[RMDB]
RNA sequence: GGGAACGACUCGAGUAGAGUCGAAAAACCAUCCUAUUCGUAGGAUGGUGCACCAUUGCCGAUUGUAUAUAAUACCGCAGGCGGAAAAGCGGUUCAAUUAAGGAACUUGUCAGUUCGCUGACAAGAAGCCAUGUAUGCAAUUCGUUGCAUACAUGGCAAAAGAAACAACAACAACAAC
Reactivity to 2A3 in 0.01 (KOAc 150mM, MgCl2 10mM, bicine 150mM(pH8.5), 24C), signal-to-noise 2, nucleotides 027 to 126: a000c000c000a000u000c000c000u020a030u050u060c240g080u050a000g000g000a000u000g010g000u030g020c020a040c030c000a090u050u220g090c040c020g080a080u040u100g120u040a070u010a010u010a250a230u110a070c000c010g000c030a060g180g000c000g000g050a090a120a000a000g020c010g000g000u030u080c020a020a050u050u150a130a080g060g000a040a080c000u000u010g010u000c000a000g010u020u090c150g000c080u000g000a000c010a000a000g040a020a000
Reactivity to DMS in 0.01 (KOAc 150mM, MgCl2 10mM, bicine 150mM(pH8.5), 24C), signal-to-noise 3, nucleotides 027 to 126: a030c010c000a020u000c000c010u000a040u000u000c220g000u000a000g000g000a010u000g010g010u010g000c180a190c030c010a120u000u000g020c000c040g010a060u000u000g000u010a070u000a150u010a100a100u010a030c020c030g020c030a080g010g000c140g020g010a100a080a120a110g000c040g000g010u000u000c120a010a040u010u000a070a100g000g000a130a140c010u000u000g000u000c010a010g010u010u000c160g030c010u000g000a000c000a010a000g000a060a100